[RMDB]
RNA sequence: GGGAACGACUCGAGUAGAGUCGAAAACUCAUGGCAGCGUGUGAUCUGCACACUAGCCAUGACUAGACACUGGAUCCACUAGCGUACAGGAUCAUGCGGUACCCAUGCACUAGAGUACCUAGCUCUACCCCAAAUAAUCUUUCGAGAUUAUUUGGGGAAAAGAAACAACAACAACAAC
Reactivity to 2A3 in 0.01 (KOAc 150mM, MgCl2 10mM, bicine 150mM(pH8.5), 24C), signal-to-noise 9, nucleotides 027 to 126: c010u010c000a000u010g020g000c020a050g010c090g040u020g010u020g080a300u130c110u300g040c010a000c000a000c000u020a040g000c010c010a000u010g000a000c010u040a040g040a040c030a010c160u090g090g020a030u020c040c010a030c090u060a040g070c050g120u110a040c040a110g030g020a030u040c010a020u100g030c050g040g020u090a070c010c010c020a040u100g030c050a070c090u080a040g010a010g070u060a080c010c040u030a040g030c010u010c010u050a090
Reactivity to DMS in 0.01 (KOAc 150mM, MgCl2 10mM, bicine 150mM(pH8.5), 24C), signal-to-noise 8, nucleotides 027 to 126: c170u000c000a010u000g010g020c010a050g010c050g020u010g020u000g010a140u020c220u010g020c010a010c010a020c000u000a190g030c000c000a000u000g010a030c080u000a060g010a120c170a050c100u000g010g000a040u000c030c050a130c040u000a040g000c140g020u010a040c090a080g010g000a020u010c030a070u010g000c070g010g010u000a060c050c010c010a100u010g000c110a080c160u000a030g000a080g000u000a060c040c040u000a090g000c070u000c050u000a260